[RMDB]
The record gives the reactivity of an RNA of 207 nucleotides to 2A3. The reactions ran in a buffer of 150 mM KOAc, 10 mM MgCl2 and 150 mM bicine (pH 8.5), at 24 C. 2A3 adducts were read by reverse transcription with SuperScript II with manganese.
RNA sequence: GGGAACGACUCGAGUAGAGUCGAAAAGUCGUCGUCGACGAAGGCAGCUAAGUUGGUGACGCCGAGUGGAGUAAAGACGGAGAGUAGUUCUCCGCUAGUCGGAAAGACUCCGCAUCCUCCGGCAGACCCUUCUAGCUCCCGCUAGUCGAGCGGACAACUGUGCAAUGAACUUCGGUUCAUUGCACAGAAAAGAAACAACAACAACAAC
Reactivity to 2A3 in 0.01 (KOAc 150mM, MgCl2 10mM, bicine 150mM(pH8.5), 24C), signal-to-noise 1, nucleotides 027 to 156: g050u050c030g000u000c010g100u020c000g000a000c010g020a090a120g040g030c050a000g010c010u070a300a030g040u050u000g020g000u070g010a010c020g000c000c000g000a040g070u000g000g010a030g020u150a100a150a030g050a040c000g020g030a000g020a000g030u300a020g060u240u030c000u010c050c000g000c020u050a070g190u290c010g010g000a040a120a000g120a030c020u020c020c000g000c000a100u020c000c010u000c000c000g000g000c010a020g010a020c000c000c000u030u000c000u020a000g000c010u000c000c000c010g000c140u040a000g000u000c000g000a050g160c070g050g010a020c000a000a020